The record gives the reactivity of an RNA of 177 nucleotides to DMS and 2A3. The DMS profile rests on 1,277 reads. It was measured as part of the RMDB library OK2TST. The RNA was probed in 150 mM KOAc, 10 mM MgCl2 and 150 mM bicine (pH 8.5) at 24 C. For 2A3 the reverse transcriptase was SuperScript II with manganese.

RNA sequence: GGGAACGACUCGAGUAGAGUCGAAAAGUGUAUGUAGCUAUAUGUAUGUCACUACGUAUAGGUAGCUGUGUAUGUAGCUAUGCAUCGGUCACUAUGCGGUAGACAUGGGCUUACUUUAGGCAAGUGAACCUGGAGCACGUUUCGACGUGCUCCAGGUAAAAGAAACAACAACAACAAC
Reactivity to DMS in 0.01 (KOAc 150mM, MgCl2 10mM, bicine 150mM(pH8.5), 24C), signal-to-noise 1, nucleotides 027 to 126: g000u000g020u020a020u000g010u010a020g020c000u000a020u000a060u000g000u000a040u010g020u000c150a140c040u010a040c000g020u000a050u000a070g010g030u000a040g010c140u010g020u000g010u000a010u000g010u000a060g000c170u000a010u000g010c030a040u030c070g080g010u000c060a090c020u000a040u030g040c060g040g000u000a030g000a050c030a120u000g000g010g030c040u000u010a030c030u000u000u000a070g020g030c050a060a080g020u010g000a040
Reactivity to 2A3 in 0.01 (KOAc 150mM, MgCl2 10mM, bicine 150mM(pH8.5), 24C), signal-to-noise 1, nucleotides 027 to 126: g050u070g000u070a060u170g080u040a030g020c030u060a010u000a030u080g050u040a030u130g070u000c010a010c100u070a020c020g110u050a070u030a250g170g060u060a010g000c050u000g000u000g000u030a000u030g010u030a020g000c110u060a030u060g020c000a010u100c080g000g030u040c020a010c040u010a030u050g010c020g040g050u030a000g020a060c030a210u080g080g060g060c050u060u060a020c070u000u050u100a060g000g090c060a050a050g040u060g100a060